[RMDB]
RNA sequence: GGGAACGACUCGAGUAGAGUCGAAAAGUAAUAGAUAACUGGAUGCAGCGUAGGCGUCAACGCAUAUCCAGUACGAAUGGUACCUGUAAAUAAAAUAUGGCGCCUAGUACAAGUACCAACAGAAGGAUAAGCGAUGGUGAUGUCAAUCACAUUUGUACGUACGGUGACCGUUCGCGGUCACCGUACGAAAAGAAACAACAACAACAAC
Reactivity to 2A3 in 0.01 (KOAc 150mM, MgCl2 10mM, bicine 150mM(pH8.5), 24C), signal-to-noise 2, nucleotides 027 to 156: g060u060a050a140u040a050g170a060u080a060a000c030u010g020g000a020u030g100c300a220g010c200g010u000a010g010g000c020g000u000c000a000a000c000g000c020a030u000a000u180c000c000a000g000u010a000c010g160a150a050u050g020g000u010a010c000c000u000g000u070a120a160a040u240a040a220a070a000u100a000u020g000g000c010g000c000c000u030a030g000u010a000c000a000a000g010u010a000c020c000a010a010c020a010g100a050a010g000g050a080u050a290a000g020c000g060a070u080g030g050u070g000a030u030g150u190c040a030a080u030c000a000c020a050u140u150u080g030u050a020

Structure probing data (2A3) for a 207-nucleotide construct. Source: RMDB library OK3TST, as collected in RNAgym. Values are in units of 0.01, from 0 to 300, in steps of 10.